[RMDB]
RNA sequence: GGGAACGACUCGAGUAGAGUCGAAAAGCUAGAGACCAGAGGCCUUGAAGGAAGGAAGCCCAAGGGUCUCUCCUGGCUCUGCUUCCCCAUCACUGCCUCCACUUCCCCGCAUCCCUUUCCCUGGCAGGUUCUUAACGGUGUUCGCACCGUUAAGAACAAAAGAAACAACAACAACAAC
Reactivity to 2A3 in 0.01 (KOAc 150mM, MgCl2 10mM, bicine 150mM(pH8.5), 24C), signal-to-noise 2, nucleotides 027 to 126: g030c050u080a010g000a010g020a230c000c010a020g020a030g030g040c000c020u070u090g100a150a080g090g040a090a090g120g090a150a050g070c000c000c000a030a050g030g030g030u010c010u000c010u020c060c030u010g000g000c010u000c000u010g000c000u040u070c010c010c000c000a020u070c010a010c040u050g010c000c010u020c020c000a060c050u040u060c020c000c000c000g010c020a060u050c010c000c000u010u040u000c000c000c010u000g030g010c060a050g120
Reactivity to DMS in 0.01 (KOAc 150mM, MgCl2 10mM, bicine 150mM(pH8.5), 24C), signal-to-noise 2, nucleotides 027 to 126: g020c010u050a000g020a000g030a130c000c040a100g000a050g020g030c020c000u010u000g010a190a240g000g040a110a170g030g040a200a230g000c030c030c000a100a110g000g000g060u010c020u000c030u010c200c150u000g000g000c000u000c000u020g000c030u000u030c180c000c030c210a060u010c020a090c110u040g030c000c000u000c030c090a070c100u010u010c000c000c000c100g000c040a030u000c030c000c000u000u000u010c010c030c030u000g000g010c110a100g030

The record gives the reactivity of an RNA of 177 nucleotides to 2A3 and DMS. Values cover nucleotides 27 to 126. It was measured as part of the RMDB library RFM100. For DMS, 1,801 sequencing reads were counted. The 2A3 profile rests on 3,347 reads.